[RMDB]
RNA sequence: GGGAACGACUCGAGUAGAGUCGAAAACAUGGCGUAAGCGGUUCUAAGCCUGGCAAGACCUUUGACCACAAUGCCUCCGAUUUGGCCGGGGAGGCGUUGUGGUCAAUCGUCUGUAAACCGGCCGGAGGAACGUCUCCUACUUCGGUAGGAGACGUUCAAAAGAAACAACAACAACAAC
Reactivity to 2A3 in 0.01 (KOAc 150mM, MgCl2 10mM, bicine 150mM(pH8.5), 24C), signal-to-noise 1, nucleotides 027 to 126: c080a040u130g040g000c020g050u120a130a030g050c020g010g010u010u070c140u080a010a000g000c000c000u020g040g000c110a140a040g020a020c000c000u000u000u000g000a010c000c000a000c010a010a020u000g000c000c000u000c000c020g130a200u100u000u250g060g000c050c000g010g000g070g000a000g040g000c010g000u010u000g010u000g010g000u000c000a000a000u010c000g000u030c000u060g050u080a050a050a030c010c020g010g010c000c040g050g000a010g040
Reactivity to DMS in 0.01 (KOAc 150mM, MgCl2 10mM, bicine 150mM(pH8.5), 24C), signal-to-noise 1, nucleotides 027 to 126: c070a110u020g000g020c030g010u020a090a100g000c170g020g040u010u010c040u030a100a160g000c040c000u000g060g020c050a130a020g000a040c000c050u010u010u000g000a000c000c000a020c010a000a010u010g020c000c000u000c000c000g010a190u030u040u000g040g000c050c050g000g020g000g040a010g000g000c000g030u040u010g010u000g000g000u000c000a000a000u000c230g000u000c000u000g000u020a040a040a190c030c050g000g000c000c030g010g000a160g010